[RMDB]
This 207-nucleotide RNA was probed chemically with 2A3. Source: RMDB library OK3TST, as collected in RNAgym.
RNA sequence: GGGAACGACUCGAGUAGAGUCGAAAAGAAAUCGACACCGGGGGAGGACAUUCUAUGAAGGCGCACCAUGCACGGAUUCCGUGCAACAUUGCGCGCUCCGUCAUGCACGAAAACCGUGCAACAUCAGCGGUCCACACCUUGCACGGAAACCGUGCAAAAGCUGAGCAUAUUUCGAUAUGCUCAGCUUAAAAGAAACAACAACAACAAC
Reactivity to 2A3 in 0.01 (KOAc 150mM, MgCl2 10mM, bicine 150mM(pH8.5), 24C), signal-to-noise 1, nucleotides 027 to 156: g040a010a040a000u120c010g030a020c050a030c060c080g000g020g010g020g010a020g030g000a010c000a080u010u060c030u090a040u100g090a020a040g010g000c010g020c020a030c070c020a070u040g000c000a000c000g010g000a010u070u010c000c000g010u000g000c000a010a010c020a090u160u240g020c090g020c000g000c060u040c030c010g080u110c050a070u050g000c000a000c000g080a090a040a090a090c110c000g020u010g050c000a100a020c030a040u140c010a030g010c000g000g000u050c010c010a050c000a020c000c030u010u000g030c000a000c010g000g040a000a010a010c010c010g000u010g000c000a000a010
Description: Conditions: 150 mM KOAc, 10 mM MgCl2 and 150 mM bicine (pH 8.5), 24 C. For 2A3 the reverse transcriptase was SuperScript II with manganese.